[RMDB]
RNA sequence: GGGAACGACUCGAGUAGAGUCGAAAAAGAGAGCGCGAAAAAGAUCGAUCGAUCGUUUGAACGCGCAAGUUUAAGUUUGUUACGGGCAUACUAGCUAGCUAGCUAGCAAAACAAACUUAAUAAAGAAGAUAGGGUGUCUAUUCGUAGACACCCUAUCAAAAGAAACAACAACAACAAC
Reactivity to DMS in 0.01 (KOAc 150mM, MgCl2 10mM, bicine 150mM(pH8.5), 24C), signal-to-noise 3, nucleotides 027 to 126: a110g000a200g030a150g000c010g030c000g010a060a050a050a080a080g000a020u000c020g010a170u030c230g010a000u000c000g000u000u010u010g010a170a100c020g000c000g000c000a080a010g010u000u000u000a010a000g010u000u000u000g000u000u000a150c220g020g000g000c130a160u010a140c010u010a010g000c000u000a130g010c160u000a060g030c020u030a020g010c030a030a070a020a000c000a010a000a000c000u000u000a000a000u000a050a100a130g000a050a060
Reactivity to 2A3 in 0.01 (KOAc 150mM, MgCl2 10mM, bicine 150mM(pH8.5), 24C), signal-to-noise 1, nucleotides 027 to 126: a010g210a000g040a000g000c040g000c020g110a040a020a000a020a030g000a020u000c060g080a100u170c210g020a010u000c090g040u020u030u070g060a170a030c000g000c000g030c020a000a000g030u000u040u010a000a020g000u020u010u030g020u010u010a110c110g070g030g000c050a060u120a180c010u000a040g020c000u000a010g030c030u020a000g010c000u020a000g080c040a020a080a000a020c000a000a000a000c000u000u020a010a020u040a010a110a000g110a080a040